RNA sequence: GGGAACGACUCGAGUAGAGUCGAAAACAUAUUAGGGCAGGCAGAGCCAUAUGAAUGGGCAUCGAGUGAUAGGUUUAUGAGGCGCAUCAAUACAAUCAUGCAGGGCAAGACCAAUGGGGGGAACGGGUUGAAGGACCAGAUUCGUCUGGUCCUUCAAAAAAGAAACAACAACAACAAC
Reactivity to DMS in 0.01 (KOAc 150mM, MgCl2 10mM, bicine 150mM(pH8.5), 24C), signal-to-noise 3, nucleotides 027 to 126: c050a110u010a110u020u040a060g010g030g010c070a030g020g020c100a080g000a100g000c030c040a060u020a140u010g000a070a080u010g000g010g010c030a080u000c070g020a100g010u010g000a060u030a040g020g010u000u000u020a080u020g000a160g000g040c080g000c090a060u000c100a060a000u050a060c220a080a080u020c080a030u000g020c040a070g010g000g010c090a020a030g000a060c040c090a040a090u020g010g000g020g010g000g000a040a060c050g000g000g020
Reactivity to 2A3 in 0.01 (KOAc 150mM, MgCl2 10mM, bicine 150mM(pH8.5), 24C), signal-to-noise 1, nucleotides 027 to 126: c050a040u060a270u210u090a040g010g000g000c000a030g060g000c100a100g020a050g080c000c010a040u060a020u120g200a040a030u040g000g000g040c000a050u000c000g000a070g020u040g020a040u010a180g090g140u030u030u060a110u010g020a020g090g000c000g000c000a000u170c090a000a130u150a180c000a000a050u060c060a110u090g000c000a010g030g010g000c000a000a000g020a030c000c080a050a020u150g000g000g000g000g040g000a000a100c020g010g070g010